This 307-nucleotide RNA was probed chemically with DMS. Values cover nucleotides 27 to 266. The reactions ran in a buffer of 150 mM KOAc, 10 mM MgCl2 and 150 mM bicine (pH 8.5), at 24 C. For DMS the reverse transcriptase was MarathonRT.

[RMDB]
RNA sequence: GGGAACGACUCGAGUAGAGUCGAAAAGUUACCGAUUACGUUCCUAUGGGUUCGUGAGAGGAGGUGAAACUAAUGAGCCUUAUACCAGAGCUUGCUCUUACUAUUAUAACAGAUGUUAUAGCUGGAAUUAUCUUGUAUUUCGUCUGCAAAUGGCUAGAUGGUAAGAAGUAGACCGACUGACUAGCCUAUAAACACCCGUUAAAUCGCUAAGAUACGUCAAAAAAGCCCUUAACUAUGGCACUAGUUAGGGGCUUUGGUGUUCUAAUAUGCCCUUUUUCGAAAGGGCAAAAAGAAACAACAACAACAAC
Reactivity to DMS in 0.01 (KOAc 150mM, MgCl2 10mM, bicine 150mM(pH8.5), 24C), signal-to-noise 2, nucleotides 027 to 266: g000u020u020a050c020c020g000a150u000u000a090c000g000u030u020c000c000u010a120u000g030g020g050u020u010c020g000u000g010a040g000a210g000g040a120g030g010u010g000a150a080a150c100u030a080a130u010g030a180g020c050c020u000u030a050u000a180c170c120a070g030a130g020c060u010u000g020c050u000c010u000u000a080c050u010a030u000u010a120u030a150a200c000a060g000a010u000g020u010u000a010u000a020g030c060u000g000g010a060a180u040u020a050u010c010u000u010g000u000a000u000u000u010c010g020u010c030u010g000c110a050a050a120u010g000g000c020u000a030g000a080u000g000g000u000a030a050g000a020a090g020u010a050g010a140c060c080g010a070c150u010g000a110c040u000a040g000c030c010u000a110u000a220a050a040c000a010c000c000c010g010u000u000a010a000a020u000c010g000c220u020a090a120g000a030u000a000c010g000u010c010a010a010a010a010a000a010g000c010c000c000u000u000a000a010c000u000a000u010g000g010c070a020c180u000a010g010u000u000a000g000g010g000g010c000u000u000u000g010g010u000g000u010u010c050u000a070a050u010a090